Structure probing data (2A3 and DMS) for a 177-nucleotide construct.
DMS adducts were read by reverse transcription with MarathonRT.
The RNA was probed in 150 mM KOAc, 10 mM MgCl2 and 150 mM bicine (pH 8.5) at 24 C.
RNA sequence: GGGAACGACUCGAGUAGAGUCGAAAAGCGCGCCCUAAGCCUAUCUCAGCCGAGUCAGAGACUCGGCGAAGAGUGCAAGAGCAUAAGAUAGGCUGACAGUGUCCUACACAACGAGGGACGCUGACGCUGAUAUGUGGCGUUUCGACGCCACAUAUCAAAAAGAAACAACAACAACAAC
Reactivity to 2A3 in 0.01 (KOAc 150mM, MgCl2 10mM, bicine 150mM(pH8.5), 24C), signal-to-noise 5, nucleotides 027 to 126: g040c040g020c000g040c010c000c000u010a020a000g000c010c000u000a000u010c010u020c100a010g000c000c000g000a010g000u010c060a060g110a000g000a260c000u000c020g000g000c010g000a000a010g040a010g010u010g010c040a200a210g060a060g100c000a020u030a090a020g000a000u010a000g000g000c000u000g000a000c000a010g010u000g000u000c000c010u110a060c070a030c010a220a220c120g090a210g060g000g000a000c000g000c000u000g000a010c030g000c010
Reactivity to DMS in 0.01 (KOAc 150mM, MgCl2 10mM, bicine 150mM(pH8.5), 24C), signal-to-noise 3, nucleotides 027 to 126: g000c070g000c120g040c000c020c030u000a200a040g000c000c010u010a010u000c000u010c100a200g020c000c000g000a040g000u000c000a300g040a280g000a020c020u000c000g020g000c020g040a040a040g000a210g010u000g030c020a230a200g040a140g000c020a020u020a140a100g000a000u000a000g010g000c000u000g000a100c000a000g000u020g010u000c020c000u000a100c070a080c210a070a140c230g020a300g000g000g000a030c000g020c010u000g010a200c030g020c050